[RMDB]
RNA sequence: GGGAACGACUCGAGUAGAGUCGAAAACACUUUUCUUUUUCUUUUUCCAUGGAAUGGUUUGAGCGUCAUACGUGGGCCAGAGCCAUAUUGGACAUCUUAGUGCCCUUACAGGAAUAGUCAUAUUGAUGUCACUGCAUAUUUUCGAAUAUGCAGUGACAAAAGAAACAACAACAACAAC
Reactivity to 2A3 in 0.01 (KOAc 150mM, MgCl2 10mM, bicine 150mM(pH8.5), 24C), signal-to-noise 5, nucleotides 027 to 126: c030a020c000u030u050u050u030c000u000u070u020u010u000c010u010u040u010u010u030c010c010a040u050g030g040a110a050u010g020g070u030u020u140g050a030g020c030g020u060c040a060u090a190c060g070u080g000g040g000c020c020a040g020a020g040c000c020a030u030a150u230u180g040g000a020c020a100u030c010u060u130a070g020u070g110c010c000c000u030u040a060c010a010g030g070a040a070u080a120g060u030c030a050u080a130u150u190g100a100u110
Reactivity to DMS in 0.01 (KOAc 150mM, MgCl2 10mM, bicine 150mM(pH8.5), 24C), signal-to-noise 2, nucleotides 027 to 126: c050a110c120u000u010u000u000c010u020u000u000u020u000c040u000u000u000u000u000c020c060a100u000g020g000a140a050u000g030g000u000u000u000g000a180g000c050g010u040c090a080u000a070c170g000u020g000g020g010c000c020a100g000a090g010c060c060a070u020a080u030u010g000g040a020c060a070u000c050u000u000a110g020u000g000c010c000c000u000u060a060c140a150g010g000a010a030u010a050g010u000c060a060u000a100u000u000g010a140u000

Annotation:
Chemical mapping of a 177-nucleotide RNA with 2A3 and DMS. DMS adducts were read by reverse transcription with MarathonRT.